This 177-nucleotide RNA was probed chemically with DMS and 2A3. Conditions: 150 mM KOAc, 10 mM MgCl2 and 150 mM bicine (pH 8.5), 24 C.
[RMDB]
RNA sequence: GGGAACGACUCGAGUAGAGUCGAAAACAUCUCAUUUAUGUAGGUCAUAAGUGUCAGCGCGACCGUGUGUCGACGAUACUGCUUCACGCGGAUCGUGGUGGGCUAGUGUCGGUGCCAGAACUGACAAUCAUGGCUACCUCUUCGGGGGUAGUCAUGAAAAAGAAACAACAACAACAAC
Reactivity to DMS in 0.01 (KOAc 150mM, MgCl2 10mM, bicine 150mM(pH8.5), 24C), signal-to-noise 7, nucleotides 027 to 126: c130a120u040c080u020c000a030u010u010u010a010u010g010u020a100g010g020u030c020a020u000a020a020g030u000g010u030c020a030g010c010g010c000g000a010c010c000g000u010g010u010g000u000c010g010a090c050g000a140u040a080c150u030g000c010u000u010c010a010c020g010c010g000g000a070u000c010g020u000g000g000u000g010g000g000c000u010a070g020u010g000u000c000g010g020u000g000c000c020a040g010a030a040c010u000g000a020c020a030a120
Reactivity to 2A3 in 0.01 (KOAc 150mM, MgCl2 10mM, bicine 150mM(pH8.5), 24C), signal-to-noise 9, nucleotides 027 to 126: c040a110u050c020u010c020a020u010u020u030a040u030g130u100a080g100g170u140c010a010u010a040a010g020u010g030u030c010a010g050c010g000c000g010a000c010c000g010u010g000u010g000u010c020g020a300c010g060a160u120a300c180u250g020c000u000u010c010a000c000g000c000g000g050a190u010c000g000u000g010g140u010g010g000g000c010u050a080g050u000g000u040c000g010g000u010g010c010c020a010g000a020a010c000u010g000a000c000a000a020